[RMDB]
RNA sequence: GGGAACGACUCGAGUAGAGUCGAAAAGAUAUGGACACGCGAGAGCAACAGCGUUACUUCGGAAACGAAGUGAACGACAUGCUCUCGUCCUAAGUCAAAGUACGAUAACGUUCGCGUUAUCGUACAAGAGAAUUUCCUAGUUCGCUAGGAAAUUCUCAAAAGAAACAACAACAACAAC
Reactivity to 2A3 in 0.01 (KOAc 150mM, MgCl2 10mM, bicine 150mM(pH8.5), 24C), signal-to-noise 5, nucleotides 027 to 126: g040a010u110a080u200g090g020a030c050a030c230g150c080g010a000g010a000g000c010a020a160c050a190g050c020g010u010u020a010c000u010u000c010g020g020a080a060a030c010g010a020a000g000u060g100a030a000c000g150a070c020a030u070g000c000u010c000u000c000g000u000c000c000u090a160a020g030u010c060a140a080a030g010u000a000c010g000a000u000a010a010c020g020u040u050c270g000c000g120u010u010a000u000c000g010u000a000c000a000a000
Reactivity to DMS in 0.01 (KOAc 150mM, MgCl2 10mM, bicine 150mM(pH8.5), 24C), signal-to-noise 5, nucleotides 027 to 126: g000a090u010a280u000g010g000a070c070a130c300g030c090g010a010g000a010g010c010a030a120c240a210g020c010g020u000u000a010c000u000u000c000g000g000a070a090a170c020g000a000a010g000u000g020a000a010c000g000a040c100a190u000g000c010u000c000u000c010g000u000c020c020u010a040a130g020u010c050a090a100a130g000u000a000c000g000a010u000a010a000c000g020u000u000c190g020c010g000u000u000a000u000c000g010u000a010c000a030a060
The record gives the reactivity of an RNA of 177 nucleotides to 2A3 and DMS.
For DMS the reverse transcriptase was MarathonRT.
The DMS profile rests on 4,428 reads.
The 2A3 profile rests on 12,500 reads.